[RMDB]
RNA sequence: GGGAACGACUCGAGUAGAGUCGAAAAGAUAAGGAGUGCGAAAGCAAUCACUCUGUACACUAAGAUUGCAAGCACUCUGUAUCAAAAGUAGAGCAGGGGAAACCCAGUGUACAGAGAAGCUCUAAAACGAUAGUUGUACCUUCGGGUACAACUAUCGAAAAGAAACAACAACAACAAC
Reactivity to DMS in 0.01 (KOAc 150mM, MgCl2 10mM, bicine 150mM(pH8.5), 24C), signal-to-noise 2, nucleotides 027 to 126: g000a010u000a090a130g000g000a050g020u000g000c000g000a080a120a180g010c000a000a010u020c000a270c110u000c000u000g000u000a000c000a030c040u000a150a110g000a000u000u000g000c000a030a270g000c020a000c000u030c000u000g020u010a010u000c020a040a060a100a090g000u010a040g040a010g000c040a100g000g030g020g010a080a100a140c000c010c000a030g040u000g020u010a010c010a000g000a000g020a270a120g000c030u000c030u000a100a050a100a050
Reactivity to 2A3 in 0.01 (KOAc 150mM, MgCl2 10mM, bicine 150mM(pH8.5), 24C), signal-to-noise 4, nucleotides 027 to 126: g040a010u050a050a100g020g000a010g000u020g000c010g120a150a060a080g010c000a000a000u010c010a100c030u000c000u000g000u000a010c010a000c010u080a080a030g000a010u000u000g000c030a170a070g000c000a010c000u000c010u010g020u000a030u030c020a000a090a060a020g090u120a040g020a020g020c090a050g000g010g010g040a020a040a040c000c000c020a000g000u020g000u000a010c000a000g010a000g020a010a010g030c000u000c020u130a050a030a030a050
Notes: The record gives the reactivity of an RNA of 177 nucleotides to DMS and 2A3. High 2A3 reactivity points to a flexible backbone, as in loops and unpaired stretches. For 2A3 the reverse transcriptase was SuperScript II with manganese. DMS (dimethyl sulfate) methylates the pairing face of unpaired adenines and cytosines. The reactions ran in a buffer of 150 mM KOAc, 10 mM MgCl2 and 150 mM bicine (pH 8.5), at 24 C.